[RMDB]
RNA sequence: GGGAACGACUCGAGUAGAGUCGAAAAACUUAUGACGCCGAUACCUUAAGCAAAGAUCCGGCAGAUGGUCGUAAAGUCAAAGGUGUUAUUCACUGGGUGAGCGCGGCACAUGCGCUGCCGGUUGAAAGCUCUACUAUGAUUUCGAUCAUAGUAGAGCAAAAGAAACAACAACAACAAC
Reactivity to 2A3 in 0.01 (KOAc 150mM, MgCl2 10mM, bicine 150mM(pH8.5), 24C), signal-to-noise 5, nucleotides 027 to 126: a000c050u130u070a070u160g050a020c040g040c050c020g070a080u100a140c030c010u100u120a110a000g050c040a130a060a060g080a090u060c030c000g030g020c010a010g040a110u080g070g010u030c020g020u060a040a090a130g050u040c020a030a060a000g040g010u050g040u080u100a200u180u130c020a010c030u070g080g000g090u120g140a040g070c060g000c010g030g020c100a060c010a300u160g040c070g000c030u000g000c000c000g000g030u030u080g050a070a020a010
Reactivity to DMS in 0.01 (KOAc 150mM, MgCl2 10mM, bicine 150mM(pH8.5), 24C), signal-to-noise 6, nucleotides 027 to 126: a100c080u010u000a080u000g010a090c060g020c050c020g020a110u010a110c050c020u000u010a110a130g020c110a060a080a090g010a060u000c100c010g000g000c010a080g000a100u010g000g010u010c030g010u000a040a060a090g020u010c050a040a090a130g010g010u000g010u000u010a110u010u010c020a030c010u010g010g020g010u010g010a040g020c070g020c020g010g030c130a070c130a060u000g010c090g010c020u000g000c000c000g000g010u000u000g010a070a070a110
Conditions: 150 mM KOAc, 10 mM MgCl2 and 150 mM bicine (pH 8.5), 24 C. The record gives the reactivity of an RNA of 177 nucleotides to 2A3 and DMS. For 2A3, 5,732 sequencing reads were counted. It was measured as part of the RMDB library OK2TRN.